Chemical mapping of a 177-nucleotide RNA with 2A3 and DMS. For DMS the reverse transcriptase was MarathonRT. It was measured as part of the RMDB libraries RFM100 and RFMREP. For 2A3 the reverse transcriptase was SuperScript II with manganese.
RNA sequence: GGGAACGACUCGAGUAGAGUCGAAAACUUGGCUGUAAACGAUGAACACUAGGUUGGGGGGGCUUGUUCCUCCCAGCCGUAGCGAAAGCGUUAAGUGUUCCGCCUGGGGAGUAUGGUCGCAAGGCUGGGCAUUAAUAACUUUCGAGUUAUUAAUGCCAAAAGAAACAACAACAACAAC
Reactivity to 2A3 in 0.01 (KOAc 150mM, MgCl2 10mM, bicine 150mM(pH8.5), 24C), signal-to-noise 8, nucleotides 027 to 126: c020u040u070g040g000c020u040g080u210a060a070a040c100g110a190u150g010a010a010c010a000c010u020a060g000g000u010u000g000g010g000g000g000g000g010c040u100u140g090u170u020c000c000u000c000c000c000a000g000c000c000g000u010a000g000c010g030a060a020a010g000c010g020u040u130a040a010g000u000g000u010u000c000c000g000c000c010u040g000g010g000g000a040g030u100a090u180g040g010u030c020g000c090a050a050g040g010c050u060g040
Reactivity to DMS in 0.01 (KOAc 150mM, MgCl2 10mM, bicine 150mM(pH8.5), 24C), signal-to-noise 7, nucleotides 027 to 126: c050u000u010g000g000c030u010g000u010a060a080a130c120g010a150u020g000a030a030c020a020c010u010a170g010g020u000u000g000g000g010g000g020g020g000c030u030u010g010u040u000c000c000u000c000c000c000a000g000c000c000g000u020a020g010c000g000a120a090a170g010c010g010u010u010a040a090g000u000g000u000u000c010c090g010c040c020u000g010g000g010g000a080g010u010a070u010g000g010u000c020g000c140a070a110g000g010c050u000g000